[RMDB]
RNA sequence: GGGAACGACUCGAGUAGAGUCGAAAACAGGUGGAAGAAAAAGGGGUGGGCCCCCCGAUCCGAGGGGCCCGACGCCCGGAUCUGGAGAGCACUCCCGGCCGUAUGGUCGAGUGUCCCCCCGGAGGGAAAACGGGGAGCUUCGGCUCCCCGAAAAGAAACAACAACAACAAC
Reactivity to DMS in 0.01 (KOAc 150mM, MgCl2 10mM, bicine 150mM(pH8.5), 24C), signal-to-noise 2, nucleotides 027 to 129: c100a070g000g050u050g000g090a050a030g000a030a030a000a110a190g010g000g040g000u010g040g030g000c000c000c000c000c000c000g020a150u020c070c080g050a060g000g000g000g000c030c000c000g000a030c000g040c130c010c070g040g000a050u050c040u020g000g060a110g020a170g020c130a020c040u010c030c090c110g040g010c020c040g030u060a050u080g020g060u000c010g000a020g010u010g020u030c020c000c070c000c000c060g000g050a050g000g030g010a010a060a020a150

An RNA of 170 nucleotides, treated with DMS and read out base by base. Reactivities are given for positions 27 through 129. Reactivities are rounded to 0.1 and cut off at 0 and 3. The data come from the RNA Mapping Database (RMDB), library 15KLIB. The RNA was probed in 150 mM KOAc, 10 mM MgCl2 and 150 mM bicine (pH 8.5) at 24 C.